[RMDB]
RNA sequence: GGGAACGACUCGAGUAGAGUCGAAAAUUACCGAUCAGGCUGUGUUGUGGCGGGGGCGAAACAGGAUCGACAAGGGUGUAAAGAUCGCUCUUUUACUCGGCAUGAUACCACCGUUAUCGGGUCAACAAAAAGAAUAUGUGGUUCGCCACAUAUUCAAGAGUUCCAUAAUCUUCGGAUUAUGGAACUCAAAAGAAACAACAACAACAAC
Reactivity to DMS in 0.01 (KOAc 150mM, MgCl2 10mM, bicine 150mM(pH8.5), 24C), signal-to-noise 1, nucleotides 027 to 156: u000u000a030c030c010g050a080u020c090a080g050g050c010u000g010u050g010u010u000g010u000g000g020c000g020g040g060g130g050c080g050a030a050a090c110a020g020g030a160u000c030g010a100c060a090a060g020g000g030u000g020u000a020a070a110g000a100u000c050g030c110u010c000u010u010u010u000a120c070u020c030g060g000c010a090u000g020a100u000a080c010c010a040c000c040g040u010u000a070u000c100g020g000g040u000c060a090a200c230a090a080a090a050a150g000a040a010u000a000u000g020u000g020g050u000u000c300g000c010c000a020c000a010u020a020u010u000c020a040a100
Reactivity to 2A3 in 0.01 (KOAc 150mM, MgCl2 10mM, bicine 150mM(pH8.5), 24C), signal-to-noise 1, nucleotides 027 to 156: u100u080a050c010c010g000a110u080c040a010g040g000c020u030g070u000g050u150u040g030u060g030g020c030g000g000g030g000g000c000g000a000a000a010c040a050g010g040a070u060c010g040a050c010a050a030g090g050g000u050g000u100a100a130a010g010a060u120c010g010c020u040c000u000u070u020u140a140c010u040c020g050g000c030a010u150g010a000u040a020c000c000a000c010c030g090u050u060a000u040c010g000g000g010u010c010a070a070c010a060a080a010a010a000g000a000a000u000a000u010g000u000g000g010u060u050c080g060c080c000a000c010a000u000a000u000u020c000a010a000